The record gives the reactivity of an RNA of 207 nucleotides to DMS and 2A3. It was measured as part of the RMDB library OK3TST.
[RMDB]
RNA sequence: GGGAACGACUCGAGUAGAGUCGAAAAUUGUCCAGGACAAAGCGGCGCGUGGCAUCCACGUUGGCCUCAAAGAUCCGACACCCGUGCUUGUCUUGCAGCCACGUGGCCACGUGACACACACUGUUGGGAUGGGAGAGGGUGAUCUUGUGGUAGUCGCAUUCUGUACACCUUUCGAGGUGUACAGAAUAAAAGAAACAACAACAACAAC
Reactivity to DMS in 0.01 (KOAc 150mM, MgCl2 10mM, bicine 150mM(pH8.5), 24C), signal-to-noise 1, nucleotides 027 to 156: u000u000g020u000c020c000a100g000g020a170c030a050a010a150g030c000g000g030c030g020c020g080u010g010g060c110a170u000c110c030a000c030g030u000u000g040g050c010c000u000c100a120a070a030g020a070u020c100c010g010a040c000a040c040c120c230g080u000g030c020u000u000g020u000c010u000u000g010c280a090g010c020c010a030c090g030u000g000g050c100c000a010c060g030u000g010a040c040a070c020a100c070a110c020u000g020u000u020g000g000g000a140u000g020g000g010a150g050a140g000g000g000u030g000a050u000c010u000u010g030u000g010g040u010a120g020u000c030g050c120
Reactivity to 2A3 in 0.01 (KOAc 150mM, MgCl2 10mM, bicine 150mM(pH8.5), 24C), signal-to-noise 2, nucleotides 027 to 156: u120u070g040u060c040c050a040g050g050a030c090a040a090a010g040c050g060g000c000g030c010g030u010g000g010c070a110u060c050c000a020c010g110u150u150g000g000c010c030u010c030a040a050a020g000a020u060c060c050g050a030c060a100c010c100c030g130u070g010c080u110u090g020u040c000u000u020g010c010a010g000c000c000a000c020g010u010g020g000c000c000a010c010g020u010g010a000c000a000c000a000c000a030c070u070g020u070u030g040g000g020a070u090g050g020g000a110g020a030g010g020g030u020g030a030u050c040u040u050g010u020g020g000u080a000g040u020c040g000c080
As a SHAPE reagent, 2A3 marks flexible, mostly unpaired nucleotides at the ribose 2'-OH.
For 2A3, 1,345 sequencing reads were counted.